[RMDB]
RNA sequence: GGGAACGACUCGAGUAGAGUCGAAAAUCAUUGAGAUGCUGGGCGCUAUGGUCGUCCUCCUCCGGCUGACCUCCUUUUCAGCUGCUGACCGGCGCCGCACAGGCGGCAUCUCAGCUUCGUGUGCAAAAAAAGAAUGGUCGGUUCGCCGACCAUUCAACUAAUGAAACAGGUUCGCCUGUUUCAUUAGAAAAGAAACAACAACAACAAC
Reactivity to DMS in 0.01 (KOAc 150mM, MgCl2 10mM, bicine 150mM(pH8.5), 24C), signal-to-noise 3, nucleotides 027 to 156: u010c090a120u000u010g010a030g020a030u000g000c010u000g000g020g020c020g020c020u000a050u020g050g010u000c000g010u000c040c030u000c040c010u010c010c010g010g020c010u000g000a040c230c050u040c080c050u000u000u000u000c020a030g020c010u000g010c080u010g010a040c020c010g010g010c010g030c000c010g010c070a070c110a100g020g000c080g010g020c010a020u000c010u000c010a050g000c080u000u000c120g030u000g020u010g010c040a000a000a090a120a100a160a190g000a020a010u000g000g000u000c000g020g010u000u020c300g040c010c010g010a030c000c000a000u000u000c000a050a180
Reactivity to 2A3 in 0.01 (KOAc 150mM, MgCl2 10mM, bicine 150mM(pH8.5), 24C), signal-to-noise 3, nucleotides 027 to 156: u120c030a030u030u090g000a000g000a000u010g000c000u040g000g000g040c020g000c020u070a160u300g050g000u030c010g100u050c000c050u050c010c010u070c020c020g010g000c010u000g010a030c010c070u180c060c040u130u100u040u070c000a010g000c010u030g040c120u110g020a010c000c010g000g000c000g000c000c000g050c030a050c010a020g190g000c000g010g000c010a000u000c000u000c010a000g000c020u120u110c070g110u090g040u060g120c080a020a130a040a040a000a030a000g010a000a010u000g010g010u010c000g010g020u040u060c150g040c100c000g000a000c000c000a000u000u000c000a000a000